[RMDB]
RNA sequence: GGGAACGACUCGAGUAGAGUCGAAAAUAUAUAGCGCGCAUAAUAGCGAUAAUAUAUCGCCGCGCGUAUAUAGCGUAUUAUGCGUAUCGCCGCUAUGCGCGCUAUGCGUAUAUAAUAGCGCGCGCGGAGUUUAGAGAUGGUUCGCCAUCUCUAAACUAAAAGAAACAACAACAACAAC
Reactivity to 2A3 in 0.01 (KOAc 150mM, MgCl2 10mM, bicine 150mM(pH8.5), 24C), signal-to-noise 6, nucleotides 027 to 126: u060a000u030a010u030a040g100c030g000c010g020c060a040u060a160a070u040a210g000c010g020a020u040a190a040u100a010u030a010u030c010g000c050c020g050c010g000c000g010u010a020u010a010u020a040g020c000g000u040a080u170u090a080u300g030c010g030u040a070u160c050g010c070c000g000c070u100a080u280g000c000g000c030g010c010u000a000u010g010c010g020u080a070u030a000u020a280a110u040a020g020c030g000c000g000c010g000c000g020g010
Reactivity to DMS in 0.01 (KOAc 150mM, MgCl2 10mM, bicine 150mM(pH8.5), 24C), signal-to-noise 8, nucleotides 027 to 126: u010a060u010a050u000a050g020c050g020c000g010c060a110u000a060a090u010a110g020c000g010a010u000a090a110u010a130u000a030u000c020g020c010c300g010c040g010c010g010u000a010u000a020u000a100g010c020g010u000a060u000u000a050u010g010c020g010u000a090u010c100g010c030c020g010c040u000a070u010g010c010g020c010g010c010u010a000u000g010c140g010u010a090u010a070u010a060a030u000a030g010c020g010c010g020c010g010c040g010g000